[RMDB]
RNA sequence: GGGAACGACUCGAGUAGAGUCGAAAAAUACACUGCACGUGGGUGCGAGCAGUUUUCGAAAUAAUCGUACGUACGUAAAGACCCAACUCUACUCGAUGCGAGGGUCAGCAAAGUCGUUCCCAUAUAAGAAGUUUAGAUGGUUCGCCAUCUAAACUUCAAAAGAAACAACAACAACAAC
Reactivity to 2A3 in 0.01 (KOAc 150mM, MgCl2 10mM, bicine 150mM(pH8.5), 24C), signal-to-noise 2, nucleotides 027 to 126: a010u070a040c060a010c060u080g040c050a010c040g060u060g080g180g030u170g030c020g000a010g000c090a030g010u030u050u030u140c060g080a050a050a080u140a040a090u070c030g020u030a050c100g250u010a010c000g010u010a030a100a000g030a000c000c010c000a000a000c000u000c000u000a010c000u010c000g030a010u030g000c020g010a110g020g010g020u010c040a000g010c020a110a300a020g010u000c030g000u000u000c000c000c000a000u010a000u000a000a010
Reactivity to DMS in 0.01 (KOAc 150mM, MgCl2 10mM, bicine 150mM(pH8.5), 24C), signal-to-noise 1, nucleotides 027 to 126: a130u030a120c170a140c060u010g000c080a070c000g020u020g020g000g050u020g010c000g000a040g010c090a070g000u000u000u000u000c050g040a040a080a010u050a090a130u020c020g020u000a060c230g010u000a020c020g000u000a110a050a110g010a010c030c030c000a110a060c000u000c010u000a000c000u000c000g000a170u020g000c040g000a030g020g000g000u000c040a220g010c040a110a130a050g040u000c000g050u000u000c030c000c000a010u010a020u000a100a110
Structure probing data (2A3 and DMS) for a 177-nucleotide construct. For 2A3, 2,625 sequencing reads were counted. Conditions: 150 mM KOAc, 10 mM MgCl2 and 150 mM bicine (pH 8.5), 24 C.